[RMDB]
RNA sequence: GGGAACGACUCGAGUAGAGUCGAAAAGAUAUGGACCGAGCUGAUAGGCGAAUAUAGUCGGAAACGACUAUAUAGCCUAUUCAGCGUUUGACGUCCUAAGUCGCGCCAUUGCCUUCGGGCAAUGGAAUCCAUACGGACUCUUCGGAGUCCGUAUGGAAAAAGAAACAACAACAACAAC
Reactivity to DMS in 0.01 (KOAc 150mM, MgCl2 10mM, bicine 150mM(pH8.5), 24C), signal-to-noise 2, nucleotides 027 to 126: g050a030u000a300u010g010g030a020c010c000g010a100g030c000u020g000a020u000a010g000g010c000g000a040a080u000a010u000a000g000u020c010g010g000a120a160a200c000g050a000c000u000a010u010a010u010a300g010c000c000u000a000u000u010c000a000g010c020g020u020u000u010g020a180c300g000u000c000c000u000a020a120g010u000c030g000c300g010c000c000a000u000u010g000c010c000u000u020c210g060g010g000c010a010a000u010g030g000a010a060